[RMDB]
RNA sequence: GGGAACGACUCGAGUAGAGUCGAAAAGAUAUGGAGAGUCAAGGGAGCUGCCAAUCAGUUAGUAACACGUCGGAAACGACGUGUUACUAACUGAUUGGACAGCAUCGAUCUUGGACUCUCCUAAGUCCGAUUUUAUAAACUUCGGUUUAUAAAAUCGAAAAGAAACAACAACAACAAC
Reactivity to DMS in 0.01 (KOAc 150mM, MgCl2 10mM, bicine 150mM(pH8.5), 24C), signal-to-noise 2, nucleotides 027 to 126: g010a110u010a300u000g000g000a000g020a030g000u000c000a020a010g000g000g000a040g030c000u000g030c010c000a010a010u000c000a020g020u000u000a000g010u000a010a020c010a000c000g020u010c000g010g000a130a130a220c000g000a020c010g020u000g000u000u000a000c000u000a000a000c010u000g000a000u000u000g000g000a040c010a000g020c000a120u000c220g020a040u020c000u010u000g020g020a020c000u000c010u000c000c000u000a010a080g010u000c060